[RMDB]
Structure probing data (2A3) for a 177-nucleotide construct. The reactions ran in a buffer of 150 mM KOAc, 10 mM MgCl2 and 150 mM bicine (pH 8.5), at 24 C.
RNA sequence: GGGAACGACUCGAGUAGAGUCGAAAAAGUACCAUAUUGCGUUACAAUAUUCCAACGUUGCACAUAGAAACCAUGAUCUUUAACCGUGAAUAAAGUUGAAACUUCACCUUUUUCAAACUCACUAAAACUUCCGUCUAGUGUUCGCACUAGACGGAAGAAAAGAAACAACAACAACAAC
Reactivity to 2A3 in 0.01 (KOAc 150mM, MgCl2 10mM, bicine 150mM(pH8.5), 24C), signal-to-noise 2, nucleotides 027 to 126: a000g120u080a080c000c000a030u030a180u030u160g030c060g060u040u090a030c040a120a050u020a090u180u020c060c000a070a020c130g070u210u220g010c040a000c020a030u140a030g040a080a030a020c000c000a020u110g030a110u000c040u020u070u020a050a030c000c030g110u080g100a130a100u280a190a170a040g040u080u110g090a040a030a210c100u060u070c070a120c030c000u050u060u040u000u020c030a060a000a060c030u060c080a080c070u190a000a000a000a240